Structure probing data (DMS) for a 177-nucleotide construct.
[RMDB]
RNA sequence: GGGAACGACUCGAGUAGAGUCGAAAAAAGAUAUGGAACAAGCAAGGUAUGGAUAAGUGCAACAGCAGCUCUCGGAAACGAGAGCUGACAUGCACGUAACAUACUGAUGACCUUGUUCCUAAGUCAAGCUUAAGGCAGACUUCGGUCUGCCUUAAGCAAAAGAAACAACAACAACAAC
Reactivity to DMS in 0.01 (KOAc 150mM, MgCl2 10mM, bicine 150mM(pH8.5), 24C), signal-to-noise 1, nucleotides 027 to 126: a070a030g010a150u020a300u000g000g030a000a000c010a000a030g000c030a060a130g010g010u000a000u000g000g000a170u010a110a190g000u010g000c000a030a130c300a230g000c000a000g010c000u000c010u000c000g000g000a090a110a180c000g000a010g000a030g000c000u000g020a000c030a030u020g000c000a000c000g000u000a090a240c000a000u000a000c000u000g000a100u090g030a090c300c000u010u010g000u000u000c000c000u000a030a030g000u000c090a090a090

Reactivities are rounded to 0.1 and cut off at 0 and 3. It was measured as part of the RMDB library TTRDES.